[RMDB]
RNA sequence: GGGAACGACUCGAGUAGAGUCGAAAAGCCCUCCAGUUCCCUUUCCCAUCUGAUCUGAACACUGGUCUUGGUGGUCGUAAAAGGAGGAAAAGUAAUACUGAAGCUGGCCACGCAGUGUUGUAGUUUGAUGUACGAUCUUAUUCGUAAGAUCGUACAUAAAAGAAACAACAACAACAAC
Reactivity to DMS in 0.01 (KOAc 150mM, MgCl2 10mM, bicine 150mM(pH8.5), 24C), signal-to-noise 6, nucleotides 027 to 126: g000c050c000c000u000c040c060a130g010u000u000c020c000c010u000u000u010c010c010c020a110u030c110u000g010a090u010c030u020g020a050a030c030a020c020u000g010g000u020c040u010u020g010g020u000g000g010u000c010g020u010a050a070a110a130g010g010a150g010g010a080a070a070a140g020u010a090a090u010a300c050u000g000a120a120g010c060u010g010g000c010c010a030c030g010c020a010g000u000g000u000u020g010u010a040g010u000u000u000g010
Reactivity to 2A3 in 0.01 (KOAc 150mM, MgCl2 10mM, bicine 150mM(pH8.5), 24C), signal-to-noise 3, nucleotides 027 to 126: g040c000c000c000u020c030c010a000g000u020u030c000c010c000u000u020u000c040c020c010a090u030c080u080g090a060u010c020u030g060a070a010c070a030c070u010g060g030u050c020u020u110g050g020u020g000g000u000c020g010u060a070a070a060a110g090g060a040g090g000a040a150a080a050g090u100a030a090u100a180c020u060g060a060a030g030c030u070g010g000c000c010a000c010g010c000a020g010u000g010u020u030g020u040a100g040u040u050u150g060
This 177-nucleotide RNA was probed chemically with DMS and 2A3.
It was measured as part of the RMDB libraries RFM100 and RFMREP.